[RMDB]
RNA sequence: GGGAACGACUCGAGUAGAGUCGAAAAACAGCGAAGUGGGUCUCCUUCAAGGGCUGAGUGUGUGGCCUCCACACUCAGAGUUAUGGUCCAGCUGCAGGAAACCAUGUACUGGCUGAUGCCACCUGGAUGGCCAGUUGUCUGGCUGGGGCAGCCGAUAUACCCCUAAUAUAUUCGUAUAUUAGGGGUAAAAAGAAACAACAACAACAAC
Reactivity to 2A3 in 0.01 (KOAc 150mM, MgCl2 10mM, bicine 150mM(pH8.5), 24C), signal-to-noise 5, nucleotides 027 to 156: a000c060a010g080c050g090a130a030g070u120g030g030g030u030c030u040c050c010u150u190c100a130a130g020g010g000c010u000g000a010g010u000g000u010g030u080g120g030c000c000u010c020c000a000c000a000c010u010c000a010g000a000g010u050u090a100u100g020g000u010c020c010a020g030c090u100g030c080a040g000g080a070a060a030c010c000a030u070g040u140a030c020u030g020g000c010u100g070a160u230g050c000c030a050c000c040u090g070g040a120u100g060g010c000c000a010g010u080u100g050u040c050u030g020g000c020u000g000g000g000g040c020a010g020c000c000g010a010u080a020
Reactivity to DMS in 0.01 (KOAc 150mM, MgCl2 10mM, bicine 150mM(pH8.5), 24C), signal-to-noise 4, nucleotides 027 to 156: a050c040a070g020c050g010a060a070g030u000g000g010g020u000c020u000c020c020u000u000c080a130a110g020g000g010c010u010g010a000g020u010g010u010g010u000g020g010c060c010u000c100c000a020c020a010c010u000c010a030g010a090g020u000u000a060u010g010g010u010c010c010a080g020c050u010g010c050a220g020g000a140a060a070c020c010a080u000g020u000a080c050u000g020g030c000u000g010a160u000g010c020c020a060c030c030u010g010g000a070u010g010g010c030c000a100g010u000u000g010u000c030u000g010g000c010u010g010g000g020g020c020a090g010c010c000g010a040u000a190
This 207-nucleotide RNA was probed chemically with 2A3 and DMS. For 2A3 the reverse transcriptase was SuperScript II with manganese. As a SHAPE reagent, 2A3 marks flexible, mostly unpaired nucleotides at the ribose 2'-OH. Values are in units of 0.01, from 0 to 300, in steps of 10. Reactivities are given for positions 27 through 156.